[RMDB]
RNA sequence: GGGAACGACUCGAGUAGAGUCGAAAAAGUUCCCUUGGCUCAUAGUCUGUGCUAGAGUAAUAGCUGCUCUUUUCCUCUGCAUUGGAAGGAAUAUCUAUCCUUUUAUAUGUAUUCAGAAGGGCUGCACCAAUAACAUCAUGUUCGCAUGAUGUUAUUGAAAAGAAACAACAACAACAAC
Reactivity to 2A3 in 0.01 (KOAc 150mM, MgCl2 10mM, bicine 150mM(pH8.5), 24C), signal-to-noise 9, nucleotides 027 to 126: a000g010u010u000c020c000c000u000u070g070g000c010u010c030a170u040a080g070u030c160u160g170u260g020c010u030a020g000a010g090u090a070a170u050a190g010c020u030g000c000u010c000u050u030u030u030c010c030u080c030u020g000c000a000u000u020g010g010a000a010g020g030a040a050u090a120u160c070u080a150u050c010c000u020u010u010u010a230u010a000u120g010u000a060u050u130c030a020g010a030a010g010g010g010c030u020g000c000a020c020
Reactivity to DMS in 0.01 (KOAc 150mM, MgCl2 10mM, bicine 150mM(pH8.5), 24C), signal-to-noise 9, nucleotides 027 to 126: a200g000u000u000c000c000c000u000u000g010g000c010u000c020a090u000a060g010u000c170u010g020u010g010c020u000a040g000a080g010u000a110a100u010a100g000c020u000g010c010u000c010u000u000u000u010c090c060u010c150u000g010c010a020u000u000g000g000a010a010g000g010a030a120u010a110u010c280u010a140u000c000c000u000u000u000u000a020u010a010u010g010u000a040u010u010c120a040g010a030a020g000g000g000c020u000g010c020a200c230